Source information: This 177-nucleotide RNA was probed chemically with DMS and 2A3. 2A3 is a SHAPE reagent: it acylates the 2'-hydroxyl of flexible nucleotides of all four kinds. 2A3 adducts were read by reverse transcription with SuperScript II with manganese.

[RMDB]
RNA sequence: GGGAACGACUCGAGUAGAGUCGAAAAACAUGGGUUAGUCGAUCCUAAGACAUAGGGUAGUUCCGUUUGAAAGCGCGCCCUAGUGCGCCGUUUGUCGAAAGGGAAGCCGGUUAAUAUUCCGGCACCUAAAUUCAUAUUCCUUCGGGAAUAUGAAUUUAAAAGAAACAACAACAACAAC
Reactivity to DMS in 0.01 (KOAc 150mM, MgCl2 10mM, bicine 150mM(pH8.5), 24C), signal-to-noise 9, nucleotides 027 to 126: a070c080a150u040g010g010g010u000u010a040g000u000c020g000a040u000c020c010u000a080a110g010a140c100a100u020a130g000g010g010u000a060g000u010u000c000c000g020u010u010u010g000a060a080a050g000c060g000c010g000c000c040c160u020a090g010u020g010c020g000c050c040g020u000u000u010g000u010c030g010a070a080a060g000g010g010a120a120g030c010c000g000g010u010u020a080a100u020a250u020u030c000c000g010g020c000a010c010c010u010
Reactivity to 2A3 in 0.01 (KOAc 150mM, MgCl2 10mM, bicine 150mM(pH8.5), 24C), signal-to-noise 6, nucleotides 027 to 126: a000c060a090u160g050g000g020u070u080a080g050u080c080g030a060u050c030c040u070a090a020g050a040c050a090u080a020g020g010g010u020a060g040u060u030c010c020g020u030u040u130g140a090a060a000g030c020g000c000g030c010c020c050u070a090g030u110g150c020g000c040c020g000u040u080u060g150u050c040g060a110a040a040g010g000g020a130a030g000c000c000g000g010u060u090a130a050u060a100u150u040c000c000g000g000c010a010c000c000u000